[RMDB]
RNA sequence: GGGAACGACUCGAGUAGAGUCGAAAAGUCGCCGCGUCUACAUCAACGCCCAGCGCGGGCGAGGGAAGCGUCCUACGGGGGUGUCCCAUUCGCCGGCAUGGCAGAGGACGGCAAGAUUGCCGCGACGCCGUGCUAUCCUAUUCGUAGGAUAGCACGGAAAAGAAACAACAACAACAAC
Reactivity to 2A3 in 0.01 (KOAc 150mM, MgCl2 10mM, bicine 150mM(pH8.5), 24C), signal-to-noise 5, nucleotides 027 to 126: g030u000c000g000c020c010g000c000g000u000c010u040a060c010a100u080c030a080a060c040g020c020c010c010a100g060c300g110c110g260g000g000c010g000a020g020g010g010a060a040g070c030g130u070c010c010u030a100c130g090g000g010g000g040u070g090u050c010c000c010a110u130u060c030g010c000c000g040g040c080a080u080g010g000c020a000g010a030g110g030a020c010g030g020c010a000a010g060a060u150u300g010c010c010g000c000g000a000c010g000
Reactivity to DMS in 0.01 (KOAc 150mM, MgCl2 10mM, bicine 150mM(pH8.5), 24C), signal-to-noise 6, nucleotides 027 to 126: g020u000c010g030c010c230g020c020g000u010c010u000a090c110a130u000c050a090a130c090g000c050c020c080a150g020c120g030c070g000g000g000c010g000a050g000g010g000a070a080g000c020g010u010c010c010u010a100c160g030g000g010g010g010u000g000u000c000c000c000a190u010u010c060g010c020c000g010g020c030a110u010g000g010c060a130g010a200g010g010a070c030g000g020c090a050a050g000a060u010u000g050c020c200g010c020g010a050c040g020
Record summary: Conditions: 150 mM KOAc, 10 mM MgCl2 and 150 mM bicine (pH 8.5), 24 C. Chemical mapping of a 177-nucleotide RNA with 2A3 and DMS. DMS adducts were read by reverse transcription with MarathonRT. It was measured as part of the RMDB library OK2TRN. The DMS profile rests on 6,020 reads.